[RMDB]
RNA sequence: GGGAACGACUCGAGUAGAGUCGAAAAGACUGGAAGGUUGGCAGCUUCUGUAAUCACGCUUCUGUGAGGUCUGAUUGUGGGAUGGCCUGAGGCUGGGGAUCACUGUGUAGUGGACCAGCCAUGUUGACGGAACGUCCGCACUAAGCUUGCCAUCAAUUAUAUAAAGCUACUUCGGUAGCUUUAUAUAAAAAGAAACAACAACAACAAC
Reactivity to 2A3 in 0.01 (KOAc 150mM, MgCl2 10mM, bicine 150mM(pH8.5), 24C), signal-to-noise 2, nucleotides 027 to 156: g010a010c010u010g020g000a010a010g030g000u030u010g030g010c010a000g010c010u000u000c000u060g050u050a050a000u000c000a000c020g010c030u270u180c040u260g010u000g020a020g030g000u010c020u040g060a160u050u120g030u070g020g140g000a000u010g050g010c000c010u060g040a040g020g000c010u010g000g000g000g150a050u060c000a000c020u060g100u060g140u300a030g000u010g030g000a020c010c010a000g000c010c010a010u030g000u000u020g000a040c010g000g080a130a090c150g040u010c020c020g000c010a020c050u040a050a030g030c020u060u080g000c010c000a020u040c000a000a050u060
Reactivity to DMS in 0.01 (KOAc 150mM, MgCl2 10mM, bicine 150mM(pH8.5), 24C), signal-to-noise 3, nucleotides 027 to 156: g020a040c020u010g030g000a070a030g000g020u010u010g040g020c020a300g010c010u000u010c020u000g030u000a040a050u000c010a010c030g010c030u010u000c030u000g030u010g010a040g010g010u000c020u000g020a130u000u000g020u000g010g010g010a060u010g010g020c010c030u000g000a150g000g010c000u000g020g010g010g030a140u000c000a040c020u010g000u000g020u000a030g050u010g030g010a100c010c000a020g010c010c010a030u000g010u010u000g000a130c030g020g020a170a140c160g000u000c000c010g000c030a080c070u000a070a130g010c040u000u010g010c020c010a070u000c020a060a300u000